Description
Chemical mapping of a 177-nucleotide RNA with 2A3 and DMS. It was measured as part of the RMDB library TTRDEL. Reactivities are given for positions 27 through 126. DMS adducts were read by reverse transcription with MarathonRT.

RNA sequence: GGGAACGACUCGAGUAGAGUCGAAAAGAUAUGGACCGUACGUGAGCGACGAUCGCAGGGCUCGGAAACGAGCCUGCGGGAGCUCACGGUCCUAAGUCAAACGUGCAUCCCUUCGGGGAUGCACGAACACUAGACGAAAGUUCGCUUUCGUCUAGUGAAAAGAAACAACAACAACAAC
Reactivity to 2A3 in 0.01 (KOAc 150mM, MgCl2 10mM, bicine 150mM(pH8.5), 24C), signal-to-noise 5, nucleotides 027 to 126: g020a000u060a020u110g010g000a000c020c030g070u280a120c290g120u150g070a010g000c020g300a300c050g040a080u030c010g000c010a050g090g200g120c000u000c030g010g000a050a050a020c010g000a000g010c000c000u000g000c000g000g010g010a020g000c000u000c000a000c000g000g000u000c000c000u020a100a010g040u010c050a140a030a050c020g010u000g000c000a010u000c040c000c000u010u080c300g030g000g000g000a000u010g010c000a000c000g000a000a000
Reactivity to DMS in 0.01 (KOAc 150mM, MgCl2 10mM, bicine 150mM(pH8.5), 24C), signal-to-noise 5, nucleotides 027 to 126: g010a020u000a270u010g010g010a010c000c040g010u010a090c300g020u000g010a010g010c010g010a090c240g000a030u000c020g000c000a020g010g020g010c000u000c010g010g010a040a040a120c010g010a010g000c000c000u000g000c010g000g000g000a050g010c000u000c000a020c010g000g020u000c000c000u000a020a090g010u000c020a080a090a220c010g010u000g000c000a010u000c000c000c010u000u010c190g020g010g000g000a010u000g000c000a000c000g000a020a140